RNA sequence: GGGAACGACUCGAGUAGAGUCGAAAACAGGUAGGGAAAACACAACUGCCAACAACGAAUUGGCACUCGCUGCUUAAUUAAAAGCAGCCGUCUUCCCAAGUUCUGCUCUGAGGCUUGGGCAAGGCGUCAUAAAUCAGAGCUAUCCUAAGGCACAAACGUAUUUAGCUAAGUUCGCUUAGCUAAAUACAAAAGAAACAACAACAACAAC
Reactivity to DMS in 0.01 (KOAc 150mM, MgCl2 10mM, bicine 150mM(pH8.5), 24C), signal-to-noise 3, nucleotides 027 to 156: c050a100g020g020u000a040g010g020g000a030a020a090a100c070a070c030a120a080c100u010g000c000c000a010a050c060a130a150c110g010a090a290u010u010g010g000c030a090c110u000c100g020c000u000g000c000u000u000a070a170u010u010a060a080a070a010g020c000a010g020c000c020g010u000c020u000u000c000c010c000a030a100g000u010u000c020u010g030c040u000c030u000g020a120g000g010c010u010u000g010g010g030c300a010a030g030g030c030g010u000c070a070u010a040a110a030u000c030a020g000a050g010c010u000a060u000c010c010u000a090a100g000g000c000a070c030a070a090a120c160
Reactivity to 2A3 in 0.01 (KOAc 150mM, MgCl2 10mM, bicine 150mM(pH8.5), 24C), signal-to-noise 7, nucleotides 027 to 156: c050a020g030g080u100a030g030g040g040a040a050a130a010c120a020c040a120a160c100u080g000c010c010a010a010c040a040a060c060g110a100a120u030u010g010g000c020a030c060u080c060g000c000u020g010c000u050u030a120a130u180u170a130a300a020a030g000c000a000g000c000c010g000u000c000u010u000c000c000c000a000a000g000u010u000c000u030g000c000u000c000u010g000a000g000g000c000u010u000g000g020g000c040a020a000g010g000c000g000u010c010a040u150a100a160a010u000c000a000g000a000g000c000u000a030u040c010c020u050a040a040g070g000c060a030c020a110a060a020c190
Background: An RNA of 207 nucleotides, treated with DMS and 2A3 and read out base by base. The RNA was probed in 150 mM KOAc, 10 mM MgCl2 and 150 mM bicine (pH 8.5) at 24 C. For DMS the reverse transcriptase was MarathonRT. Reactivities are given for positions 27 through 156.